[RMDB]
RNA sequence: GGGAACGACUCGAGUAGAGUCGAAAAUCCGUCUCGUCUACGGCUCGCAGCGGAUGAUGCGCUUUACAAACCUGCUCUACAUGAAUCAGCACGUGCAGUGGCAAACGUGGAUGUCGCUCUUCAGCGCGAGUGUAGCGCGGUUCGCCGCGCUACACUCAAAAGAAACAACAACAACAAC
Reactivity to 2A3 in 0.01 (KOAc 150mM, MgCl2 10mM, bicine 150mM(pH8.5), 24C), signal-to-noise 2, nucleotides 027 to 126: u060c010c000g060u010c040u040c060g230u000c020u020a030c030g000g000c020u010c010g000c060a100g020c010g040g030a030u040g000a000u130g050c030g010c000u160u030u000a050c040a040a030a030c000c000u010g000c000u000c010u070a070c010a070u030g060a020a040u140c050a040g070c130a010c100g000u040g100c010a020g010u090g080g000c000a050a060a000c060g030u030g010g060a050u110g090u140c010g010c030u090c020u110u050c000a060g040c000g050c050
Reactivity to DMS in 0.01 (KOAc 150mM, MgCl2 10mM, bicine 150mM(pH8.5), 24C), signal-to-noise 1, nucleotides 027 to 126: u010c020c010g000u000c030u000c110g010u000c040u000a060c050g000g030c030u000c030g030c040a090g010c040g020g010a030u000g000a040u000g030c070g000c020u000u000u000a090c120a050a090a100c140c060u000g000c010u000c000u000a090c060a110u000g000a140a060u010c110a050g000c100a040c050g040u020g010c010a030g000u010g020g000c020a040a040a050c090g000u000g010g010a080u010g020u020c010g000c010u000c120u000u000c040a090g030c090g020c120